[RMDB]
RNA sequence: GGGAACGACUCGAGUAGAGUCGAAAAGGAACCGGAUGUCAUCACGUUGUUGCAGUACCAGAUGGUAUCUUAAAUCCGAUCUGCAAAUAAGCAUGUAGAAAGCUGAUGUGGGCUUUAGCUGGACGGGGGAAUACAGGCAACUUCGGUUGCCUGUAAACUAGCUUAUCAACUUCGGUUGAUAAGCUAGAAAAGAAACAACAACAACAAC
Reactivity to 2A3 in 0.01 (KOAc 150mM, MgCl2 10mM, bicine 150mM(pH8.5), 24C), signal-to-noise 2, nucleotides 027 to 156: g010g020a050a060c060c010g010g000a080u010g040u030c040a060u010c020a080c190g020u060u020g080u000u080g050c060a060g030u090a100c050c010a030g000a040u030g010g000u000a030u020c050u060u090a060a060a000u070c030c010g010a040u030c010u000g020c040a100a040a060u100a020a100g040c020a020u080g000u070a040g100a120a080a020g020c070u060g030a100u070g080u080g050g040g020c000u080u080u100a050g030c060u070g030g040a070c030g020g000g000g010g050a010a030u070a020c000a010g030g000c000a000a020c000u050u040c120g110g030u000u000g000c030c000u000g010u000a000a000a000
Reactivity to DMS in 0.01 (KOAc 150mM, MgCl2 10mM, bicine 150mM(pH8.5), 24C), signal-to-noise 2, nucleotides 027 to 156: g020g010a030a100c030c050g000g010a070u000g000u000c010a100u010c050a190c130g020u010u000g000u000u000g010c010a050g030u000a050c040c050a100g020a120u000g050g020u000a060u000c050u000u000a080a130a060u010c020c020g010a070u010c010u000g010c070a070a060a110u000a070a100g010c070a070u000g000u020a090g020a140a070a130g000c030u010g000a100u010g010u000g040g020g020c060u000u000u000a070g030c020u010g020g020a090c080g000g000g000g060g010a070a180u010a020c020a010g010g010c000a000a020c000u010u020c290g020g040u000u020g020c010c000u000g000u000a020a030a110
This 207-nucleotide RNA was probed chemically with 2A3 and DMS. The DMS profile rests on 3,758 reads. For 2A3, 933 sequencing reads were counted. The data come from the RNA Mapping Database (RMDB), library M2RFPK. DMS adducts were read by reverse transcription with MarathonRT.